Description
Structure probing data (DMS and 2A3) for a 177-nucleotide construct. Source: RMDB library RFM100, as collected in RNAgym.
RNA sequence: GGGAACGACUCGAGUAGAGUCGAAAAUAAUGUACGCGUUAAUGAGUAGGAGGGCGUGAAGGUCGUGAAGAAGCUCGUGGCGUGAGCCUGAGUGAAACGGCCUUUAGUGCAGAUCUUGGUGGUAGUAAUCAAGUGCGUUGUUCGCAACGCACUUGAUAAAAGAAACAACAACAACAAC
Reactivity to DMS in 0.01 (KOAc 150mM, MgCl2 10mM, bicine 150mM(pH8.5), 24C), signal-to-noise 1, nucleotides 027 to 126: u010a030a070u000g000u020a060c100g050c040g030u010u000a090a040u000g010a060g030u000a060g000g000a130g000g000g070c040g050u000g010a000a000g010g040u010c000g000u020g000a110a060g010a200a300g000c000u030c000g020u020g000g020c000g050u020g000a100g030c020c000u000g030a000g000u020g000a060a040a020c010g000g030c000c010u000u020u000a050g020u000g000c050a060g010a030u020c080u000u000g000g010u020g040g000u040a000g020u030a120
Reactivity to 2A3 in 0.01 (KOAc 150mM, MgCl2 10mM, bicine 150mM(pH8.5), 24C), signal-to-noise 1, nucleotides 027 to 126: u120a000a030u060g080u160a030c010g010c030g030u010u050a040a060u180g030a000g030u010a010g040g030a020g000g020g000c020g040u040g030a010a010g000g030u030c010g000u080g010a030a040g030a090a020g050c000u000c120g230u100g020g000c030g070u090g010a040g000c000c000u030g000a010g000u290g030a040a090a000c000g000g010c010c000u020u000u020a010g000u020g020c000a000g000a020u000c030u070u060g030g000u020g020g000u020a020g010u030a030